[RMDB]
RNA sequence: GGGAACGACUCGAGUAGAGUCGAAAAAGUGGCUACGGCCACAGUGAGUGGGAGGCCAGGGCAUGGCAGGGGGAGCUGCAGGGCCGUCGGAGGGGCCCCAGCAUCUGAGCCCUGUCCUCCCGCAGAAACGGUUUUAGCUUUUCGAAGCUAAAACCGUAAAAGAAACAACAACAACAAC
Reactivity to 2A3 in 0.01 (KOAc 150mM, MgCl2 10mM, bicine 150mM(pH8.5), 24C), signal-to-noise 3, nucleotides 027 to 126: a000g020u010g000g000c000u010a050c220g240g000c010c010a000c000a000g060u080g160a050g000u040g000g000g000a000g000g000c000c000a000g050g000g010c090a120u180g100g060c030a020g070g010g010g010g010a050g030c000u040g020c090a150g010g040g000c030c040g040u120c050g080g050a130g010g050g000g000c000c000c000c000a000g000c000a040u040c010u060g010a010g010c010c010c010u000g000u000c010c010u000c000c000c000g000c020a020g010a040a090